[RMDB]
This 177-nucleotide RNA was probed chemically with 2A3 and DMS. Source: RMDB library TTRDEL, as collected in RNAgym. Reactivities are given for positions 27 through 126. The reactions ran in a buffer of 150 mM KOAc, 10 mM MgCl2 and 150 mM bicine (pH 8.5), at 24 C. Values are in units of 0.01, from 0 to 300, in steps of 10.
RNA sequence: GGGAACGACUCGAGUAGAGUCGAAAAGAUAUGGAUGCACCGAGCGAUAAGCUGUCGAUCGGAAACGAUCGUCAGCUUUUGACGCUCUUGCUGUCCUAAGUCAAACUGAAACCUUCGGGUUUCAGAACACAUUAAGCUUGUUCGCAAGCUUAAUGUGAAAAGAAACAACAACAACAAC
Reactivity to 2A3 in 0.01 (KOAc 150mM, MgCl2 10mM, bicine 150mM(pH8.5), 24C), signal-to-noise 4, nucleotides 027 to 126: g010a010u040a010u090g010g000a000u030g000c030a020c100c200g010a010g000c010g080a260u050a300a000g000c000u000g020u010c000g000a010u010c000g010g010a030a000a020c000g010a010u010c010g000u010c000a000g000c000u010u010u010u050g010a010c020g000c000u010c000u000u030g000c080u150g050u020c000c000u010a040a000g010u010c050a080a090a190c020u010g000a000a010a010c010c000u030u090c300g130g000g000u010u010u010c000a000g000a030a020
Reactivity to DMS in 0.01 (KOAc 150mM, MgCl2 10mM, bicine 150mM(pH8.5), 24C), signal-to-noise 7, nucleotides 027 to 126: g000a020u000a110u010g000g010a040u000g010c010a010c160c190g010a010g000c000g020a150u020a010a010g010c010u000g000u000c000g000a000u010c000g000g000a030a030a050c000g010a000u000c000g010u000c000a000g010c010u000u000u000u000g010a190c060g010c000u010c000u010u000g000c000u020g030u000c000c000u000a010a120g000u000c010a090a110a250c010u000g000a000a010a000c000c000u000u010c190g020g010g010u000u000u000c000a000g000a110a210